[RMDB]
RNA sequence: GGGAACGACUCGAGUAGAGUCGAAAAGAUAUGGAAGAGUGAUGUCUGGCAACAGCUUAGCUCGGAAACGAGCUAAGACAUGCCACAUCCUCUUCCUAAGUCAAAGACGGUACUUCGGUACCGUCAACCUAUUCUUCUAGUUCGCUAGAAGAAUAGGAAAAGAAACAACAACAACAAC
Reactivity to DMS in 0.01 (KOAc 150mM, MgCl2 10mM, bicine 150mM(pH8.5), 24C), signal-to-noise 8, nucleotides 027 to 126: g010a060u000a300u010g000g000a010a000g010a030g010u030g010a010u000g000u000c230u020g030g000c010a050a120c300a170g000c010u000u000a000g010c000u000c010g010g000a110a100a230c000g000a010g010c000u000a000a000g010a040c110a170u000g010c000c000a050c010a000u000c000c000u000c000u000u000c000c000u000a010a080g000u010c030a100a100a140g000a010c000g000g000u000a000c000u000u010c240g020g000u000a000c000c000g000u000c000a010a070
Reactivity to 2A3 in 0.01 (KOAc 150mM, MgCl2 10mM, bicine 150mM(pH8.5), 24C), signal-to-noise 8, nucleotides 027 to 126: g010a030u080a040u170g010g000a010a000g020a000g090u300g040a020u020g080u200c240u130g030g000c020a090a070c070a300g050c020u000u010a000g000c000u000c000g000g010a020a030a000c000g000a000g000c000u000a000a000g020a050c010a040u090g000c000c000a000c000a000u010c000c000u000c000u000u000c000c000u000a010a010g010u000c020a040a030a200g000a000c000g000g010u010a000c010u040u160c300g100g000u000a000c000c000g000u000c000a000a000